[RMDB]
RNA sequence: GGGAACGACUCGAGUAGAGUCGAAAAUCUUCAGUGUCUUCAUCCAACACGUCUCGGCCGGCGCCUACGUGGGCACGCUCACCUUGGUCACCGGUCUACCCGAGGUGAUCAUCUCGGUGGUCAAGUCGCCUUGCAUCUUGUUCGCAAGAUGCAAGGCAAAAGAAACAACAACAACAAC
Reactivity to DMS in 0.01 (KOAc 150mM, MgCl2 10mM, bicine 150mM(pH8.5), 24C), signal-to-noise 1, nucleotides 027 to 126: u000c040u090u030c000a140g000u000g000u030c000u010u020c130a080u020c080c040a140a180c050a070c070g000u010c050u000c130g020g020c000c020g000g030c300g000c030c000u000a000c230g000u040g040g020g000c060a030c180g010c010u040c010a010c040c020u020u000g030g000u010c050a010c020c000g060g000u010c000u020a050c070c020c040g010a200g000g040u000g000a080u010c030a000u000c000u000c050g040g000u020g000g050u030c050a050a030g020u010c130
Reactivity to 2A3 in 0.01 (KOAc 150mM, MgCl2 10mM, bicine 150mM(pH8.5), 24C), signal-to-noise 3, nucleotides 027 to 126: u090c030u110u070c020a040g020u010g050u060c030u040u040c040a070u040c010c000a020a010c010a000c060g110u000c070u050c090g000g000c000c020g020g070c020g010c000c010u040a050c030g040u070g030g020g000c030a000c200g130c010u000c000a020c020c030u010u030g020g000u080c020a010c030c000g040g000u030c010u010a020c000c000c010g020a010g000g030u120g020a090u090c030a020u000c030u000c010g020g010u040g030g030u030c030a030a050g090u080c070
The data come from the RNA Mapping Database (RMDB), library OK1LIB. The record gives the reactivity of an RNA of 177 nucleotides to DMS and 2A3. For 2A3, 1,990 sequencing reads were counted. Values are in units of 0.01, from 0 to 300, in steps of 10. For 2A3 the reverse transcriptase was SuperScript II with manganese.